[RMDB]
RNA sequence: GGGAACGACUCGAGUAGAGUCGAAAAGAACUGGAGAAAGUGCAGAAUUUAACUUCAACUUUGACUGUGAAUGGAUUAACAAUGAAAGAGCAUUCAUUCCUCCAGGACUGAUGUUUAAUCCAUUGGACACUCAGGGAGGAUUCGUCCUCCCUGAGUGAAAAGAAACAACAACAACAAC
Reactivity to DMS in 0.01 (KOAc 150mM, MgCl2 10mM, bicine 150mM(pH8.5), 24C), signal-to-noise 2, nucleotides 027 to 126: g000a080a190c010u000g000g000a040g020a110a050a050g010u010g000c080a160g000a040a070u000u000u000a090a100c140u010u000c030a070a120c020u010u010u010g020a080c160u030g030u000g020a060a060u020g000g000a020u020u000a120a050c140a020a060u000g000a090a070a050g040a120g010c070a020u000u010c090a020u000u000c080c000u010c050c020a060g000g000a190c090u000g010a110u010g000u000u010u010a070a060u000c010c020a090u000u000g000g000a300
Reactivity to 2A3 in 0.01 (KOAc 150mM, MgCl2 10mM, bicine 150mM(pH8.5), 24C), signal-to-noise 2, nucleotides 027 to 126: g000a020a060c010u000g030g010a020g010a050a190a010g070u120g080c040a010g010a180a080u160u140u110a150a110c090u120u110c030a030a060c020u050u060u120g060a070c030u020g020u020g090a020a010u010g030g000a030u010u180a120a110c080a040a110u190g140a140a110a010g030a030g040c000a010u010u030c000a000u000u040c030c000u020c000c000a000g000g000a000c020u020g000a020u070g070u050u090u090a060a020u000c020c010a070u040u150g130g000a010